[RMDB]
RNA sequence: GGGAACGACUCGAGUAGAGUCGAAAAAGGGAAGACCUCUUAUUGGAGCCACACUCCCAUGUAUGAUUGAGCAAUUCAAAGUGUUUUGGCUGAAACCCUACGAACAAUGUCCGCAGUGUUCAAAUGCAAAGCAACCAGGUGGGAAACCAUUCGUGUCAGUGGCAGUCAAGAAACAUAUUGUUAGUGCAUGGCCGAACGCAUCCCGAAUAAGCUGGACUAUCGGGGAUGGAAUCCCAUACAUUGGAUCAAGGACAGAAGAUAAGAUAGCUCCCUCCUUCGGGAGGGAGAAAAGAAACAACAACAACAAC
Reactivity to DMS in 0.01 (KOAc 150mM, MgCl2 10mM, bicine 150mM(pH8.5), 24C), signal-to-noise 1, nucleotides 027 to 266: a090g000g010g010a280a110g000a040c190c050u000c000u000u040a090u010u020g040g010a300g000c080c060a110c110a210c300u020c010c000c020a130u040g000u040a040u000g000a060u000u000g040a140g000c020a060a050u020u000c060a160a070a130g040u000g000u010u040u000u000g000g020c030u010g000a150a050a090c010c000c000u000a090c080g000a020a080c040a120a150u000g040u000c110c030g000c020a100g110u020g020u020u000c080a060a210a070u040g000c000a150a050a240g020c050a070a080c090c080a000g000g000u010g000g000g000a120a070a300c050c000a090u000u000c020g000u050g000u020c080a050g020u000g000g020c050a020g090u000c070a090a040g000a070a060a110c080a120u000a070u020u000g020u000u000a080g000u020g010c000a060u000g020g000c020c000g000a030a050c040g030c200a080u000c020c000c000g020a010a100u020a060a140g000c000u000g000g050a140c100u000a000u000c070g000g010g000g000a040u000g000g000a010a180u000c040c130c000a000u000a040c040a050u010u000g000g000a000u000c100a180a080g020g000a060c050a040g000a160a070g000a060u000a130a060g000a050u000a220g000